The record gives the reactivity of an RNA of 207 nucleotides to 2A3 and DMS.

RNA sequence: GGGAACGACUCGAGUAGAGUCGAAAAAAUACUACCAAUGAAGAUAGAUGGACACGUAGGGACUUUCAAACAGAAUACAGUGAUGUUGAUUCCCUCAAAGCUUAUGCCUUACGUACUAUCAAGCAGUAUGCUUAUCCACUAAUGACUUAUACUGUCACACUGCGGAAUAAUUCGUUAUUCCGCAGUGAAAAGAAACAACAACAACAAC
Reactivity to 2A3 in 0.01 (KOAc 150mM, MgCl2 10mM, bicine 150mM(pH8.5), 24C), signal-to-noise 5, nucleotides 027 to 156: a010a000u220a050c050u050a060c040c020a060a090u170g040a070a010g040a050u110a040g040a060u050g060g010a020c020a000c110g030u040a000g030g040g030a030c050u070u160u070c160a080a080a060c020a040g070a120a040u150a120c030a040g110u060g080a080u070g040u040u050g020a080u040u020c000c000c000u030c030a040a080a000g010c020u090u090a060u190g030c010c000u000u010a010c010g010u040a060c020u030a030u060c010a000a020g000c000a020g060u100a040u140g030c020u050u030a020u080c040c010a050c070u100a110a070u030g020a000c000u060u030a040u110a230c080u070g010u010c000a000
Reactivity to DMS in 0.01 (KOAc 150mM, MgCl2 10mM, bicine 150mM(pH8.5), 24C), signal-to-noise 2, nucleotides 027 to 156: a060a060u000a050c000u000a200c030c000a170a080u000g010a110a150g020a100u020a050g000a190u000g000g000a130c090a020c070g050u000a040g010g010g020a040c060u020u000u010c050a120a070a130c070a050g000a100a090u000a060c050a030g020u020g010a140u000g020u000u000g020a180u000u000c020c000c040u000c060a040a070a040g020c080u010u000a100u000g010c000c010u000u040a020c030g020u020a170c080u000a090u000c050a090a090g000c000a030g020u010a050u000g010c080u010u000a090u000c030c030a080c080u010a060a110u010g000a040c010u000u000a110u010a070c130u000g040u000c030a190
Background
As a SHAPE reagent, 2A3 marks flexible, mostly unpaired nucleotides at the ribose 2'-OH. Values are in units of 0.01, from 0 to 300, in steps of 10. The DMS profile rests on 3,450 reads. The RNA was probed in 150 mM KOAc, 10 mM MgCl2 and 150 mM bicine (pH 8.5) at 24 C. Reactivities are given for positions 27 through 156. For DMS the reverse transcriptase was MarathonRT.